The data come from the RNA Mapping Database (RMDB), library OK3TST. Chemical mapping of a 207-nucleotide RNA with 2A3 and DMS. The 2A3 profile rests on 2,109 reads. Conditions: 150 mM KOAc, 10 mM MgCl2 and 150 mM bicine (pH 8.5), 24 C.
RNA sequence: GGGAACGACUCGAGUAGAGUCGAAAAGCUCAGCGAUCUCAACCAAAGAAUCCAGACGUACUGCGAAGACCUGGAAAGUCGCGUGUCCGAGGCGGAGGCGCUGCUCAAACAACAGUGCGAAGUCGAUCCACCGCCGUGUCAGGACGUCGCCGCCGCCUGUAUAAUUCACCUUCGGGUGAAUUAUACAAAAAGAAACAACAACAACAAC
Reactivity to 2A3 in 0.01 (KOAc 150mM, MgCl2 10mM, bicine 150mM(pH8.5), 24C), signal-to-noise 3, nucleotides 027 to 156: g000c000u010c090a010g010c010g020a090u030c050u050c070a110a110c050c040a120a080a050g040a060a060u010c010c000a020g060a100c070g080u150a130c100u120g110c080g060a140a030g010a090c000c010u010g000g050a060a010a030g060u040c010g000c020g030u060g050u010c020c020g050a040g010g000c000g010g010a020g010g000c010g010c030u000g000c010u050c080a140a200a090c020a030a010c010a060g010u030g090c010g040a160a010g050u120c050g070a080u020c030c020a020c020c030g020c020c010g050u040g070u050c040a020g070g000a010c010g030u040c010g030c000c010g030c000c010g020c010c000
Reactivity to DMS in 0.01 (KOAc 150mM, MgCl2 10mM, bicine 150mM(pH8.5), 24C), signal-to-noise 2, nucleotides 027 to 156: g030c030u000c010a090g030c040g030a050u000c000u010c050a090a180c030c060a040a090a090g020a120a150u010c010c030a050g020a130c050g020u000a120c010u000g030c080g030a120a110g010a080c070c050u000g040g000a080a090a070g010u000c020g010c060g020u010g000u000c010c010g010a120g020g010c000g000g010a140g000g000c020g030c000u000g000c030u000c040a180a170a170c010a030a010c020a020g000u010g010c040g000a080a160g020u000c110g000a160u020c030c040a090c010c000g030c000c040g000u000g010u010c110a150g000g020a070c020g020u000c010g030c000c010g000c020c000g010c040c020